[RMDB]
RNA sequence: GGGAACGACUCGAGUAGAGUCGAAAAGAGCGACGCAAUGCCGCGAGGCGGAGCAAAUCGCAAAAAAGGCGCCCCAGUUCGGAUUGCAGGCUGCAAUUCGCCUGCAUGAAGUCGGAAUCGCUAGUAAAGACUUUAAAUUGUUCGCAAUUUAAAGUCUAAAAGAAACAACAACAACAAC
Reactivity to DMS in 0.01 (KOAc 150mM, MgCl2 10mM, bicine 150mM(pH8.5), 24C), signal-to-noise 8, nucleotides 027 to 126: g020a180g010c010g020a050c280g000c020a040a250u030g000c020c000g020c290g000a230g000g010c000g000g010a300g000c020a050a080a160u000c010g000c000a010a030a080a060a130a150g000g000c020g010c290c020c020c080a140g020u020u020c010g000g010a100u000u000g000c000a000g010g020c020u000g020c210a090a130u010u020c180g020c040c010u000g000c000a000u000g000a290a140g000u010c030g000g000a080a050u010c010g010c020u010a070g030u010a060a060
Reactivity to 2A3 in 0.01 (KOAc 150mM, MgCl2 10mM, bicine 150mM(pH8.5), 24C), signal-to-noise 2, nucleotides 027 to 126: g070a010g010c000g010a010c050g000c010a000a020u050g010c000c010g020c030g010a070g010g000c000g010g000a000g000c010a000a030a000u010c000g000c000a010a020a000a010a020a160g040g000c030g000c020c020c000c010a040g070u150u110c000g020g000a020u010u010g020c010a000g000g000c010u060g020c060a020a070u170u190c060g000c000c000u000g000c000a000u000g010a010a000g010u020c010g010g040a020a040u110c020g000c020u020a030g050u090a050a200